Conditions: 150 mM KOAc, 10 mM MgCl2 and 150 mM bicine (pH 8.5), 24 C.
An RNA of 177 nucleotides, treated with DMS and 2A3 and read out base by base.
DMS (dimethyl sulfate) methylates the pairing face of unpaired adenines and cytosines.
Reactivities are given for positions 27 through 126.
For DMS the reverse transcriptase was MarathonRT.
[RMDB]
RNA sequence: GGGAACGACUCGAGUAGAGUCGAAAAACGGUGGCAUACGUGCCACCGAACCUUAAGGCCGCGCUCGCCAGCCUCGGUGGGGCGGCUCCCGGCGCCGCGACCAAUGACGCCUACUACGGUAGGCGAAAUUGUAGUACCAGUUCGCUGGUACUACAAUAAAAGAAACAACAACAACAAC
Reactivity to DMS in 0.01 (KOAc 150mM, MgCl2 10mM, bicine 150mM(pH8.5), 24C), signal-to-noise 5, nucleotides 027 to 126: a090c020g000g040u000g000g010c000a050u020a070c210g020u000g010c000c000a010c000c000g000a000a020c030c020u000u030a090a140g010g000c000c000g000c010g020c020u000c010g020c010c030a180g020c170c110u020c140g000g020u010g000g000g000g020c020g000g000c030u000c010c010c010g000g010c030g020c210c010g010c020g000a070c060c090a110a070u020g000a220c020g000c000c000u000a000c000u000a130c200g030g000u000a000g020g010c000g010a000a040
Reactivity to 2A3 in 0.01 (KOAc 150mM, MgCl2 10mM, bicine 150mM(pH8.5), 24C), signal-to-noise 9, nucleotides 027 to 126: a000c010g000g000u000g000g000c000a020u030a130c250g100u030g000c000c000a000c000c000g000a010a010c000c000u040u120a090a060g050g000c010c000g030c030g110c020u020c010g020c000c010a040g070c080c050u120c110g040g000u070g010g010g000g000c000g000g000c000u020c000c000c010g010g000c020g000c000c020g020c020g030a030c010c020a030a080u150g070a040c010g000c010c000u000a000c000u000a020c190g090g000u000a010g000g010c000g000a030a040